RNA sequence: GGGAACGACUCGAGUAGAGUCGAAAAUGAGAAGUCGUCAGUAGUUCGACGUGAGCAGAAGCCCGCCUCGAUAUGCUAUGUGGACGAGGGCAUGCCCAAGACACACCUUAACCCUAGCGGGACGCAAUCUACGUUUAAGUUUCGACUUAAACGUAGAAAAAGAAACAACAACAACAAC
Reactivity to DMS in 0.01 (KOAc 150mM, MgCl2 10mM, bicine 150mM(pH8.5), 24C), signal-to-noise 8, nucleotides 027 to 126: u010g010a100g010a120a120g010u000c020g000u010c030a100g010u000a090g020u010u000c040g020a030c090g010u000g010a060g010c030a110g000a150a150g020c010c010c020g020c020c030u000c060g010a080u020a050u000g010c050u000a120u010g020u000g000g000a090c040g010a220g000g010g020c060a050u010g020c010c000c030a050a150g000a070c050a030c050a050c080c040u000u000a060a110c030c010c010u000a100g010c080g000g000g010a060c120g010c130a080a100
Reactivity to 2A3 in 0.01 (KOAc 150mM, MgCl2 10mM, bicine 150mM(pH8.5), 24C), signal-to-noise 7, nucleotides 027 to 126: u190g010a050g030a150a020g090u050c010g010u020c030a050g070u090a020g050u150u090c050g020a010c020g030u040g030a020g000c030a020g030a300a020g040c000c010c010g000c010c000u050c030g020a040u020a030u220g030c040u040a030u100g300u050g160g010a080c010g010a040g010g020g000c020a040u140g040c000c000c000a000a010g040a000c020a000c000a020c040c010u070u130a070a090c000c010c010u010a020g020c010g000g000g000a010c020g000c030a030a110